[RMDB]
RNA sequence: GGGAACGACUCGAGUAGAGUCGAAAAGAUAUGGACGGAGGCGCAGGCUAUGUGGGUCGGAAACGACCCACUAAGGCCUGAACUACGCUUAAGUCCUAAGUCAAACAGCCCACUUCGGUGGGCUGAACCUGUACAGGUUGUUCGCAACCUGUACAGGAAAAGAAACAACAACAACAAC
Reactivity to DMS in 0.01 (KOAc 150mM, MgCl2 10mM, bicine 150mM(pH8.5), 24C), signal-to-noise 1, nucleotides 027 to 126: g000a030u000a300u000g000g020a000c000g010g070a080g000g000c000g010c000a020g000g000c000u000a300u000g000u000g020g100g000u020c000g050g000a170a060a150c000g050a000c050c000c000a000c000u000a040a130g000g010c000c000u000g000a040a060c100u010a300c060g000c000u000u010a150a270g020u000c000c000u000a000a050g000u020c010a140a160a180c010a000g000c020c000c000a000c000u000u000c210g070g000u000g030g000g020c000u000g000a010a040
An RNA of 177 nucleotides, treated with DMS and read out base by base. The data come from the RNA Mapping Database (RMDB), library TTRDEL. Conditions: 150 mM KOAc, 10 mM MgCl2 and 150 mM bicine (pH 8.5), 24 C.